Structure probing data (2A3 and DMS) for a 177-nucleotide construct. 2A3 adducts were read by reverse transcription with SuperScript II with manganese. The DMS profile rests on 1,370 reads. As a SHAPE reagent, 2A3 marks flexible, mostly unpaired nucleotides at the ribose 2'-OH. The RNA was probed in 150 mM KOAc, 10 mM MgCl2 and 150 mM bicine (pH 8.5) at 24 C. DMS (dimethyl sulfate) methylates the pairing face of unpaired adenines and cytosines.
RNA sequence: GGGAACGACUCGAGUAGAGUCGAAAAUCAUCAGUUUUAAAAGUAUCGGGCUUUCGUGCUCGUAUGGCCACAGCUCAAGGAAGAAAAGUACUUAGAAAUCGAAGAAAAAAGGGUCGAAAAAAAUUAGCGAUAAACUAGUAUUCGUACUAGUUUAUCGAAAAGAAACAACAACAACAAC
Reactivity to 2A3 in 0.01 (KOAc 150mM, MgCl2 10mM, bicine 150mM(pH8.5), 24C), signal-to-noise 1, nucleotides 027 to 126: u070c010a040u000c010a020g050u020u050u100u230a120a210a010a020g030u090a100u180c030g100g000g000c050u140u300u300c150g040u120g000c030u000c040g000u010a020u060g010g010c030c000a090c000a030g000c030u020c030a050a000g030g010a010a010g070a070a100a020a050g030u010a030c030u040u040a030g050a020a070a010u090c110g010a010a040g010a030a120a060a040a020a050g000g060g000u070c040g080a140a050a010a000a000a100a020u130u120a060g030
Reactivity to DMS in 0.01 (KOAc 150mM, MgCl2 10mM, bicine 150mM(pH8.5), 24C), signal-to-noise 2, nucleotides 027 to 126: u010c040a070u010c030a160g010u010u000u010u010a030a140a110a130g000u000a050u000c120g000g010g020c030u000u030u000c110g020u000g010c000u010c110g000u010a050u010g010g010c030c080a050c100a070g010c030u010c040a100a160g010g020a080a110g010a020a110a060a070g000u000a050c040u000u000a200g000a050a050a050u000c030g010a040a100g030a010a050a070a100a120a060g000g000g010u000c050g000a010a010a030a120a110a060a110u020u010a040g010